Chemical mapping of a 207-nucleotide RNA with 2A3. Conditions: 150 mM KOAc, 10 mM MgCl2 and 150 mM bicine (pH 8.5), 24 C. The data come from the RNA Mapping Database (RMDB), library OK3TST. 2A3 adducts were read by reverse transcription with SuperScript II with manganese.

[RMDB]
RNA sequence: GGGAACGACUCGAGUAGAGUCGAAAACAUUGGAGGCCGUCCAUGCAUUGAAUUAUACGAUCGUGAAAACGCUUACUCCGGGAUCUGAAGGUAGAGUAUUUGUUGCUAAACCUCCAGGGAGUGAGACACCCGUUGUAUUAAAAAUUGGUAUGAAAGGCCACCUCAUUUAGUUCGCUAAAUGAGGUGGAAAAGAAACAACAACAACAAC
Reactivity to 2A3 in 0.01 (KOAc 150mM, MgCl2 10mM, bicine 150mM(pH8.5), 24C), signal-to-noise 1, nucleotides 027 to 156: c060a030u100u190g070g010a020g040g000c020c010g040u010c010c000a030u050g030c030a000u030u100g050a130a060u230u060a030u080a060c080g060a070u070c040g030u040g060a000a030a090a060c070g000c020u030u010a000c010u020c030c000g080g050g060a140u050c020u040g020a050a010g000g000u020a040g000a050g150u050a080u130u100u130g200u170u040g010c000u020a060a060a030c000c000u010c040c000a020g040g000g000a000g000u020g000a040g020a000c020a060c010c010c010g020u020u060g080u050a210u110u090a070a060a080a050a070u050u080g020g000u060a030u040g080a160a050a030g060g000